Conditions: 150 mM KOAc, 10 mM MgCl2 and 150 mM bicine (pH 8.5), 24 C. This 207-nucleotide RNA was probed chemically with 2A3. Values cover nucleotides 27 to 156. It was measured as part of the RMDB library M2RFPK. The 2A3 profile rests on 397 reads.
RNA sequence: GGGAACGACUCGAGUAGAGUCGAAAAAGGCACUCCAUACCCUACUCCGACUCACUACGUCCCCGUCGUACAGAAUGGUAACAUAUCUCUCCAAAUAUCUGAGCUUGGGUAUACGGGGAAACCCAACAAAAGCAAUUGUGGUUCGCCACAAUUGCAACAAGUCCUAACCCUUCGGGGUUAGGACUUGAAAAGAAACAACAACAACAAC
Reactivity to 2A3 in 0.01 (KOAc 150mM, MgCl2 10mM, bicine 150mM(pH8.5), 24C), signal-to-noise 1, nucleotides 027 to 156: a000g040g000c020a080c040u090c050c030a080u100a110c020c000c050u080a050c040u010c030c040g000a000c030u000c020a090c050u030a010c010g120u090c000c000c000c000g060u090c020g010u000a060c060a120g080a190a070u010g080g050u200a230a040c070a090u280a260u110c120u020c000u020c090c040a100a150a150u180a270u130c180u170g120a000g100c080u000u030g000g020g000u030a010u000a040c020g000g020g000g000a000a050a000c000c000c020a000a000c020a000a170a000a000g010c000a000a000u000u000g000u010g000g070u110u120c160g050c050c000a000c000a000a000u000u000g000c000a000a000